This 177-nucleotide RNA was probed chemically with 2A3. Reactivities are given for positions 27 through 126. The reactions ran in a buffer of 150 mM KOAc, 10 mM MgCl2 and 150 mM bicine (pH 8.5), at 24 C. Reactivities are rounded to 0.1 and cut off at 0 and 3. Source: RMDB library OK1LIB, as collected in RNAgym.
[RMDB]
RNA sequence: GGGAACGACUCGAGUAGAGUCGAAAAUUGUUGGAAAAGUGCUCACAAAUGCGUUGGUCAUUUCAAUCACCACAGCAGUUUUCAAACGAAUUGCACCCCAGCGCGUCAACCGAUUUGAACGGUCGGUGUGGCCAUGUGCAUUCGUGCACAUGGCCACAAAAGAAACAACAACAACAAC
Reactivity to 2A3 in 0.01 (KOAc 150mM, MgCl2 10mM, bicine 150mM(pH8.5), 24C), signal-to-noise 1, nucleotides 027 to 126: u010u060g040u000u000g100g060a010a010a010a010g060u030g020c000u000c130a070c090a030a140a080u130g040c030g160u130u080g080g150u110c080a110u000u110u000c000a010a090u060c020a010c000c000a000c000a000g000c000a050g000u000u000u000u100c080a220a110a060c080g130a080a050u100u100g010c060a030c030c090c000c000a140g120c080g010c000g000u020c020a000a020c000c000g030a000u000u020u300g000a070a000c080g130g000u000c050g020g020u000